Chemical mapping of a 177-nucleotide RNA with DMS and 2A3. The RNA was probed in 150 mM KOAc, 10 mM MgCl2 and 150 mM bicine (pH 8.5) at 24 C. For 2A3 the reverse transcriptase was SuperScript II with manganese. The 2A3 profile rests on 1,373 reads. Values cover nucleotides 27 to 126. For DMS, 2,297 sequencing reads were counted. The data come from the RNA Mapping Database (RMDB), library OK2TRN.

[RMDB]
RNA sequence: GGGAACGACUCGAGUAGAGUCGAAAAUCUGUUCUUCGCUGCUGGGGUUAACUGCAUUGAGGUUGGACGCUCUUCCUCACACAGUGUCUGAGUCAAUCAAGAAAUACAUCGAUGCCAAUGCAAAAGAUAGCUUUAAAUGGUUCGCCAUUUAAAGCUAAAAAGAAACAACAACAACAAC
Reactivity to DMS in 0.01 (KOAc 150mM, MgCl2 10mM, bicine 150mM(pH8.5), 24C), signal-to-noise 3, nucleotides 027 to 126: u000c060u000g020u000u000c020u000u000c070g020c040u000g020c030u010g000g000g000g020u000u000a040a110c100u000g000c080a130u020u000g010a040g000g030u000u010g000g000a110c120g020c060u020c060u010u000c020c000u000c070a070c160a090c120a030g000u000g010u000c040u010g000a130g000u010c060a040a070u000c130a080a050g000a100a070a070u000a070c080a090u000c070g000a120u000g020c030c060a040a110u000g010c080a030a060a070a100g010a240
Reactivity to 2A3 in 0.01 (KOAc 150mM, MgCl2 10mM, bicine 150mM(pH8.5), 24C), signal-to-noise 2, nucleotides 027 to 126: u020c020u020g080u110u000c020u070u110c090g060c030u050g000c020u000g010g020g010g010u080u060a120a020c010u010g010c040a110u010u120g030a020g000g060u050u040g070g030a030c060g040c030u020c020u070u010c040c000u040c020a040c010a000c000a030g020u010g020u080c040u030g010a040g040u060c070a030a050u000c010a000a080g120a090a180a000u140a090c040a070u020c050g060a020u040g040c000c030a090a040u100g000c010a160a030a000a060g060a060